[RMDB]
RNA sequence: GGGAACGACUCGAGUAGAGUCGAAAAGAUGUGAUUCAAACCUCACCACGUCCCAGUUCACGGAUCUGUUUUGCUGGGUCCUGGCAGCAUCGGAAGGGGAGCCACAACCGGCAAUUUUUACGCCGCCCGAAGUACGCUUCUUCGGAAGCGUACUUCGAAAAGAAACAACAACAACAAC
Reactivity to DMS in 0.01 (KOAc 150mM, MgCl2 10mM, bicine 150mM(pH8.5), 24C), signal-to-noise 2, nucleotides 027 to 126: g000a020u010g000u000g000a020u050u030c080a030a060a100c100c110u000c000a060c040c040a050c200g000u060c000c010c000a120g000u040u000c040a030c170g010g010a030u000c080u010g000u030u000u010u000g000c100u000g010g000g010u000c030c000u020g050g010c110a130g000c110a060u070c010g000g020a100a140g000g000g000g000a090g000c000c100a090c110a030a100c160c020g000g000c010a070a000u000u030u050u040u000a130c110g030c020c000g010c090c060
Reactivity to 2A3 in 0.01 (KOAc 150mM, MgCl2 10mM, bicine 150mM(pH8.5), 24C), signal-to-noise 4, nucleotides 027 to 126: g080a040u070g050u070g080a140u090u120c120a110a070a090c040c000u030c010a020c010c010a010c070g050u030c010c000c000a000g040u070u080c060a040c090g030g020a110u050c030u080g150u060u100u100u120g040c020u060g020g020g020u020c000c010u010g040g000c020a040g000c020a100u060c020g040g040a050a000g060g000g000g010a010g030c050c000a050c020a090a040c050c000g000g000c000a030a070u090u080u040u050u100a090c070g010c000c020g000c010c010
Structure probing data (DMS and 2A3) for a 177-nucleotide construct. For DMS, 1,609 sequencing reads were counted. The 2A3 profile rests on 1,913 reads. 2A3 adducts were read by reverse transcription with SuperScript II with manganese.